Structure probing data (DMS and 2A3) for a 207-nucleotide construct. For 2A3, 2,504 sequencing reads were counted. Reactivities are given for positions 27 through 156. DMS adducts were read by reverse transcription with MarathonRT.
RNA sequence: GGGAACGACUCGAGUAGAGUCGAAAAUUCAAGGGAUACGAAAACGAACAAUCGCACGUCACAUUAUACAGCCAUUGGGGAGAAUCCUCAUGGCGUAGCGACUUAGCAAUAGCCUUAGAUAAGGCUAAGCCACGCUGGUCUGACCCAUCCUAUGGAACGAUACACAACAGUUCGCUGUUGUGUAUCGAAAAGAAACAACAACAACAAC
Reactivity to DMS in 0.01 (KOAc 150mM, MgCl2 10mM, bicine 150mM(pH8.5), 24C), signal-to-noise 2, nucleotides 027 to 156: u000u020c070a100a170g020g020g020a070u000a170c040g010a060a110a030a170c030g000a060a110c070a110a170u010c070g080c020a090c040g040u020c010a100c050a080u040u020a080u000a080c130a220g000c020c050a070u000u000g050g070g020g050a230g000a210a140u030c010c010u000c010a000u010g010g000c010g000u000a020g020c010g010a010c040u000u000a080g000c020a020a120u000a040g000c000c040u000u000a090g020a150u020a040a080g010g000c000u020a020a080g020c030c000a040c120g050c020u000g010g010u000c020u000g000a180c070c000c000a150u010c030c070u000a140u000g020g000a080a210
Reactivity to 2A3 in 0.01 (KOAc 150mM, MgCl2 10mM, bicine 150mM(pH8.5), 24C), signal-to-noise 4, nucleotides 027 to 156: u110u040c040a020a060g010g000g020a040u040a140c040g080a030a010a100a040c070g070a060a040c080a100a120u070c040g000c050a010c030g040u050c040a020c020a080u070u220a090u090a120c030a020g000c010c010a030u200u240g000g000g000g000a090g150a140a150u140c010c000u020c000a000u000g000g000c020g010u000a010g020c020g040a020c020u130u140a010g010c030a040a080u000a080g000c000c020u120u040a120g010a200u280a160a030g000g000c000u010a010a000g080c060c010a060c020g010c020u040g020g000u020c050u040g090a050c000c000c030a050u040c000c020u070a110u120g000g050a000a070